[RMDB]
Record summary:
This 207-nucleotide RNA was probed chemically with 2A3. Conditions: 150 mM KOAc, 10 mM MgCl2 and 150 mM bicine (pH 8.5), 24 C. Source: RMDB library OK3TST, as collected in RNAgym. High 2A3 reactivity points to a flexible backbone, as in loops and unpaired stretches. 2A3 adducts were read by reverse transcription with SuperScript II with manganese. For 2A3, 496 sequencing reads were counted.
RNA sequence: GGGAACGACUCGAGUAGAGUCGAAAAUAUUUGAAAGAGAAUGUGUAGAAAUAAUUUGAGAGCUAGUAUAUUGUCUUCAUCCUGUGUGAACUUUCUGAUGCUACUGCCAGGCAAUGGAAAUCUGGAUCAUCUUAAUUCAAUUUUAGGGAUUCAAAUACCUAAUCGUCCUGUUCGCAGGACGAUUAGGAAAAGAAACAACAACAACAAC
Reactivity to 2A3 in 0.01 (KOAc 150mM, MgCl2 10mM, bicine 150mM(pH8.5), 24C), signal-to-noise 1, nucleotides 027 to 156: u080a010u040u080u070g010a030a140a000g070a000g080a150a020u080g000u030g010u110a050g000a080a030a000u040a060a080u110u090u150g010a070g010a000g100c010u010a030g090u080a200u010a060u220u060g070u000c020u030u040c040a050u120c030c010u070g010u010g000u000g120a040a030c010u020u040u050c100u220g030a040u050g030c030u020a050c030u010g060c010c030a040g010g000c070a010a000u020g000g090a040a040a000u060c010u030g000g000a000u000c010a000u010c000u000u030a000a000u090u250c080a030a080u020u120u090u090a010g000g070g000a010u100u110c000a070a060a050u160a050